[RMDB]
RNA sequence: GGGAACGACUCGAGUAGAGUCGAAAAGAUAUGGAGUUACGGUACAUAGCAACAGCUCGGAAACGAGACAUGCUGGGUAUUAACUCCUAAGUCAAAAGCCGUUUUACGGUUCGCCGUAAAACGGCAACAUAACAACUCCCUUCGGGGAGUUGUUAUGAAAAGAAACAACAACAACAAC
Reactivity to 2A3 in 0.01 (KOAc 150mM, MgCl2 10mM, bicine 150mM(pH8.5), 24C), signal-to-noise 1, nucleotides 027 to 126: g020a010u070a020u150g020g000a000g000u030u040a070c180g080g050u040a010c030a050u100a060g000c020a020a090c030a230g020c010u010c010g050g030a090a050a030c020g000a000g000a070c020a020u060g000c000u000g060g020g020u060a060u120u040a040a010c000u000c010c000u020a090a030g070u050c020a010a000a150a120g040c000c000g000u030u000u000u000a010c000g070g000u040u100c300g060c060c020g000u000a000a000a000a000c000g000g020c000a000a010
Reactivity to DMS in 0.01 (KOAc 150mM, MgCl2 10mM, bicine 150mM(pH8.5), 24C), signal-to-noise 3, nucleotides 027 to 126: g010a020u000a300u000g000g020a000g010u010u010a040c300g000g010u020a010c020a080u010a000g000c000a030a090c300a150g000c000u010c010g000g000a130a060a160c000g000a000g000a030c110a110u000g000c000u000g000g000g000u010a010u010u000a010a000c000u000c000c000u000a020a130g000u010c020a090a060a110a090g010c000c000g000u000u000u000u000a010c000g020g010u010u000c180g000c010c000g000u010a010a010a000a020c000g000g010c010a000a020